RNA sequence: GGGAACGACUCGAGUAGAGUCGAAAAGAAACGCAAGGCCGCUGACCGACGGGAUAUUGUGGGGCAUACCACAGGGGACGCGGCGUUAUCACUUGCCUUUUAAGCCGACCGUCUGGGCUGCAUACAAACCACCCAACUAUCUUCGGAUAGUUGGGAACAUCAGGAUCUUGUUCGCAAGAUCCUGAUGAAAAGAAACAACAACAACAAC
Reactivity to DMS in 0.01 (KOAc 150mM, MgCl2 10mM, bicine 150mM(pH8.5), 24C), signal-to-noise 2, nucleotides 027 to 156: g040a060a090a090c140g000c040a100a110g010g000c020c000g020c000u010g010a190c020c010g010a140c050g050g060g000a140u010a030u000u050g060u010g010g000g000g030c210a120u010a110c020c030a000c030a110g000g010g010g010a260c130g020c060g000g020c020g000u000u000a060u010c090a200c050u010u070g000c030c010u000u000u000u000a080a090g010c000c000g010a100c040c020g030u000c060u020g030g000g030c040u000g010c030a120u000a140c040a050a060a120c030c070a150c000c000c000a010a000c000u000a000u010c010u000u010c300g030g010a050u000a000g010u000u000g010g010g000a000a000
Reactivity to 2A3 in 0.01 (KOAc 150mM, MgCl2 10mM, bicine 150mM(pH8.5), 24C), signal-to-noise 3, nucleotides 027 to 156: g000a010a070a000c090g010c040a020a000g120g000c000c010g000c020u030g080a030c000c020g040a040c030g000g070g000a120u140a090u300u010g010u020g000g030g060g140c090a070u160a120c010c000a020c020a030g010g000g000g020a010c020g000c020g020g000c010g000u030u040a030u020c010a010c070u010u000g000c020c050u060u130u060u050a050a000g000c010c000g050a100c000c000g040u010c020u120g030g020g000c000u000g000c020a050u070a180c130a010a050a070c020c040a040c000c010c010a000a000c000u000a000u000c000u030u060c100g090g010a020u000a000g000u000u000g000g000g000a000a000